[RMDB]
RNA sequence: GGGAACGACUCGAGUAGAGUCGAAAAUUGGUAAUGGCAAUGUAUUAAGAUUAACUCCAUAAUGUCUAGCAGCAUCUGCGAUGUUAUAAGUGUCGUCAAAGCGGGGUCUAUCGUGUGCUGUUACAUAUUGUCUAACACCUAUAAGAUUAUCAAAAUCUGAGUAAUUACCAUUCGUGGUAAUUACUCAAAAAGAAACAACAACAACAAC
Reactivity to 2A3 in 0.01 (KOAc 150mM, MgCl2 10mM, bicine 150mM(pH8.5), 24C), signal-to-noise 5, nucleotides 027 to 156: u080u070g000g000u030a060a120u110g000g000c020a020a020u030g030u080a100u080u220a120a060g020a060u080u100a050a060c030u030c040c040a050u110a140a060u150g010u060c030u020a010g000c010a010g000c000a010u050c040u120g020c010g030a010u030g060u150u090a100u030a140a100g040u030g050u090c080g030u030c100a110a040a020g050c050g010g010g010g030u030c020u060a050u020c020g000u020g000u010g030c010u000g020u030u000a000c010a000u110a010u000u020g010u000c000u020a050a020c030a040c050c020u030a040u050a140a010g020a050u040u120a090u300c060a060a080a190a050u000c000
Reactivity to DMS in 0.01 (KOAc 150mM, MgCl2 10mM, bicine 150mM(pH8.5), 24C), signal-to-noise 3, nucleotides 027 to 156: u000u010g020g010u000a080a110u000g020g000c020a060a060u000g030u010a140u000u010a100a120g010a110u000u010a060a100c040u010c020c020a090u000a090a050u000g010u000c010u000a080g010c040a100g020c000a030u000c060u010g050c030g010a040u000g020u000u010a120u010a080a100g020u000g030u000c030g020u000c080a070a080a200g000c070g000g010g030g020u000c060u010a050u000c040g030u010g050u000g020c020u010g020u000u000a050c010a100u000a100u000u010g010u000c010u010a050a120c080a050c060c010u000a110u010a130a120g020a070u000u000a080u010c060a050a040a070a140u010c060